RNA sequence: GGGAACGACUCGAGUAGAGUCGAAAACAAUCAACAAUAUGGUUUGUGUAGUUAUGCUGAAAAUCGUUGAGGUUGUAUGGGAUAGGUUAACCGUAAGACCUUAAGUUGAAAAACUUUAAAAUUAAUCAAAAUCAUGUACACUUCGGUGUACAUGAAACAGGAGUAUUCAGUUCGCUGAAUACUCCUGAAAAGAAACAACAACAACAAC
Reactivity to 2A3 in 0.01 (KOAc 150mM, MgCl2 10mM, bicine 150mM(pH8.5), 24C), signal-to-noise 3, nucleotides 027 to 156: c040a020a090u100c040a040a030c020a030a100u070a060u190g060g030u040u050u010g060u060g020u030a140g030u120u050a050u210g020c020u060g070a040a090a060a090u090c040g010u010u010g000a020g010g030u020u010g020u020a110u100g040g000g000a040u090a090g040g010u030u050a070a030c040c010g040u030a000a060g000a000c000c000u000u020a030a020g000u000u010g010a100a070a040a010a020c010u130u130u120a070a120a060a090u130u240a090a080u120c020a090a140a000a110u000c000a000u000g000u010a000c000a000c000u040u080c200g080g000u000g000u010a000c000a000u000g000a000a000a000
Reactivity to DMS in 0.01 (KOAc 150mM, MgCl2 10mM, bicine 150mM(pH8.5), 24C), signal-to-noise 1, nucleotides 027 to 156: c020a100a080u000c010a020a120c050a130a230u000a130u000g010g000u000u000u000g030u000g050u000a090g010u000u000a050u000g030c070u000g030a040a050a090a040u010c080g010u000u000g000a080g010g010u010u000g000u000a070u020g030g000g000a140u000a040g040g000u000u000a050a140c050c120g030u020a080a170g000a040c000c000u010u000a020a100g040u000u000g000a120a040a090a070a050c030u000u010u000a010a010a020a100u000u000a150a180u000c020a010a040a140a120u010c000a000u000g010u000a020c010a010c000u000u020c300g000g000u000g000u000a000c000a000u000g010a000a040a070

Chemical mapping of a 207-nucleotide RNA with 2A3 and DMS.
DMS (dimethyl sulfate) methylates the pairing face of unpaired adenines and cytosines.
2A3 adducts were read by reverse transcription with SuperScript II with manganese.
The data come from the RNA Mapping Database (RMDB), library M2RFPK.
DMS adducts were read by reverse transcription with MarathonRT.